Background
This 177-nucleotide RNA was probed chemically with DMS. The RNA was probed in 150 mM KOAc, 10 mM MgCl2 and 150 mM bicine (pH 8.5) at 24 C. Reactivities are given for positions 27 through 126. It was measured as part of the RMDB library 15KREP.

RNA sequence: GGGAACGACUCGAGUAGAGUCGAAAAAGUGAAGGGAGACUCCGGGACUCCUUGCAUGCUGGGGACGAAGCCGCCCCCGGGCGCUCCCCUCUGUCCACCUUCGAGGGGGUUCACACCCCCAACCGGCGUAUAUUACAACGUUCGCGUUGUAAUAUACAAAAGAAACAACAACAACAAC
Reactivity to DMS in 0.01 (KOAc 150mM, MgCl2 10mM, bicine 150mM(pH8.5), 24C), signal-to-noise 1, nucleotides 027 to 126: a110g030u000g010a000a050g020g010g020a060g000a140c020u000c020c050g010g000g020a110c060u000c020c030u000u000g000c060a090u020g000c060u020g000g000g000g010a050c140g020a110a190g000c130c020g030c010c050c010c010c080g010g000g010c110g030c050u010c010c000c020c030u010c060u000g010u000c070c090a090c050c070u010u030c140g010a190g010g000g000g000g010u010u000c200a090c220a230c010c010c010c030c040a050a050c060c010g020g010c300